[RMDB]
RNA sequence: GGGAACGACUCGAGUAGAGUCGAAAAUGACCUAUCAGCUUGACGGUACGGUAAGUGCGUACCGAGGCUAUAACGGGUAACGGGGAAUAUGGGUUUUAUUCCGGAGAGGGAGCCUGAGAGAUGGCUGCCUAAAUGUUGUGUUCGCACAACAUUUAGGAAAAGAAACAACAACAACAAC
Reactivity to 2A3 in 0.01 (KOAc 150mM, MgCl2 10mM, bicine 150mM(pH8.5), 24C), signal-to-noise 9, nucleotides 027 to 126: u100g080a050c010c000u020a050u110c080a010g010c000u050u120g110a070c000g000g000u010a000c000g010g130u180a260a090g160u200g240c000g010u010a000c000c000g000a010g000g000c000u030a020u030a110a040c070g010g000g030u040a070a020c030g010g000g020g080a050a040u090a070u140g080g020g020u040u050u030u100a130u130u030c030c010g020g020a140g010a030g030g010g010a010g000c000c010u020g010a030g000a000g000a040u220g010g000c010u020g020
Reactivity to DMS in 0.01 (KOAc 150mM, MgCl2 10mM, bicine 150mM(pH8.5), 24C), signal-to-noise 9, nucleotides 027 to 126: u030g000a110c020c020u000a090u020c140a040g000c010u000u010g010a170c020g010g000u000a000c000g010g010u030a120a160g030u030g000c000g020u010a000c000c000g010a040g000g000c010u000a100u020a090a090c130g000g000g010u010a050a090c100g000g000g010g010a080a050u020a080u020g010g000g010u010u020u010u010a120u020u020c030c020g000g000a130g000a100g000g000g000a040g010c000c000u000g000a140g000a150g000a140u020g000g010c010u000g010

Structure probing data (2A3 and DMS) for a 177-nucleotide construct.
Values cover nucleotides 27 to 126.
For 2A3 the reverse transcriptase was SuperScript II with manganese.